[RMDB]
RNA sequence: GGGAACGACUCGAGUAGAGUCGAAAAAAUAGCGGCUCAAGGUACAACGCAGAGAGAUAGGCUCAUCCCAAGUUCUCUUCGGAGUACCAAGACUUCGGUACAGAAGAGAUACCGACUCUUCAUAGAACGUAUGCAACCGAUUCGUCGGUUGCAUACGAAAAGAAACAACAACAACAAC
Reactivity to DMS in 0.01 (KOAc 150mM, MgCl2 10mM, bicine 150mM(pH8.5), 24C), signal-to-noise 2, nucleotides 027 to 126: a070a100u030a060g050c030g000g000c300u010c030a020a170g000g050u000a010c030a050a150c080g000c080a080g000a040g030a110g010a050u010a050g020g030c060u010c210a080u000c120c010c030a170a070g000u000u000c000u000c000u000u030c000g010g010a300g010u000a000c020c050a050a190g010a020c170u000u000c050g010g010u010a060c130a150g000a010a030g000a010g000a040u020a080c110c010g000a120c080u000c030u000u020c030a100u000a150g010a120a130
Reactivity to 2A3 in 0.01 (KOAc 150mM, MgCl2 10mM, bicine 150mM(pH8.5), 24C), signal-to-noise 1, nucleotides 027 to 126: a010a000u180a040g040c010g010g010c030u010c040a030a050g070g000u020a010c000a000a000c030g020c000a000g020a000g010a000g000a060u090a120g120g000c030u030c040a090u070c030c000c000a000a000g060u070u040c000u000c000u000u010c020g020g020a050g010u010a000c010c030a010a010g020a000c010u110u090c040g040g000u070a040c040a040g010a020a000g000a040g010a020u080a120c000c020g050a050c000u030c010u070u000c020a040u110a050g170a210a040